[RMDB]
RNA sequence: GGGAACGACUCGAGUAGAGUCGAAAAACCGGCGGUAAAUCAACUCAGUUGAAAGCCGCGAGCGCUUUGGGUGAGAACUCAAAGGACAGCAGAUCCGGUGUAAUUCCGGGGCCGACGGUUAGAGUCCAAAAGAGGUUAUCGUUCGCGAUAACCUCAACAAAUCCUAUUAGUUCGCUAAUAGGAUUUGAAAAGAAACAACAACAACAAC
Reactivity to 2A3 in 0.01 (KOAc 150mM, MgCl2 10mM, bicine 150mM(pH8.5), 24C), signal-to-noise 2, nucleotides 027 to 156: a000c010c000g010g010c010g010g020u070a120a150a220u100c030a030a030c070u090c300a200g000u040u030g060a100a140a020g040c000c000g020c050g010a040g010c010g000c000u000u000u000g000g000g000u000g070a070g030a070a010c000u000c020a010a010a000g000g060a090c020a030g000c000a020g030a100u010c010c000g000g000u010g030u030a070a080u100u050c010c000g000g000g000g100c100c020g040a030c010g000g090u090u020a060g020a030g110u040c010c030a000a030a080a130g000a000g010g000u000u000a000u000c020g020u070u060c190g000c010g120a000u000a000a000c010c000u010c000a000a000
Reactivity to DMS in 0.01 (KOAc 150mM, MgCl2 10mM, bicine 150mM(pH8.5), 24C), signal-to-noise 2, nucleotides 027 to 156: a010c010c010g000g000c030g020g020u000a040a080a210u010c060a000a110c020u000c110a170g030u020u010g010a030a150a280g020c070c040g000c080g000a130g090c040g010c000u010u010u000g020g000g020u000g010a300g000a220a050c010u010c010a010a030a010g030g000a040c010a210g000c020a090g010a100u000c010c010g030g000u010g010u000a160a300u000u000c010c020g000g020g030g000c000c010g070a010c040g000g010u000u000a140g000a270g000u000c020c030a060a050a080a150g000a010g020g010u000u000a010u000c010g030u000u010c300g060c030g000a020u000a000a020c010c000u010c000a000a030